[RMDB]
RNA sequence: GGGAACGACUCGAGUAGAGUCGAAAAAACGCCUAGCAUCUGAGGGACGAAGCCGCCCCCGGGCGCUCCCCUCGGAGAUCCACUGGGUGGGUUCACAUCCCCAACCCGCGGGCCGGCUGUUCUUCUUACGCCCUUACCUUCGGGUAAGGGAAAAGAAACAACAACAACAAC
Reactivity to 2A3 in 0.01 (KOAc 150mM, MgCl2 10mM, bicine 150mM(pH8.5), 24C), signal-to-noise 7, nucleotides 027 to 129: a000a000c040g000c010c010u020a040g040c020a090u010c000u000g010a010g020g010g010a020c060g120a100a000g070c110c030g030c010c010c000c010c010g030g000g000c010g000c020u060c000c000c000c000u000c000g020g010a010g020a070u070c050c020a030c080u060g010g020g030u050g030g030g030u140u130c080a070c020a200u100c010c010c010c000a060a160c010c010c000g000c040g000g020g010c040c010g030g000c050u040g050u040u010c010u030u000c000u000u000a090c190g040
Reactivity to DMS in 0.01 (KOAc 150mM, MgCl2 10mM, bicine 150mM(pH8.5), 24C), signal-to-noise 5, nucleotides 027 to 129: a070a040c120g000c000c010u030a100g060c110a130u040c020u020g010a020g040g000g000a130c150g020a060a210g010c100c060g060c080c030c020c070c120g070g000g050c040g010c050u010c010c010c020c010u020c060g000g000a040g050a000u020c140c100a160c040u060g030g030g040u000g000g000g000u080u010c130a150c130a200u000c070c000c020c070a000a000c050c010c010g060c150g020g000g060c040c060g000g000c060u100g020u000u000c000u000u030c010u000u000a070c290g020
An RNA of 170 nucleotides, treated with 2A3 and DMS and read out base by base. It was measured as part of the RMDB library 15KLIB. For 2A3, 16,611 sequencing reads were counted. The RNA was probed in 150 mM KOAc, 10 mM MgCl2 and 150 mM bicine (pH 8.5) at 24 C.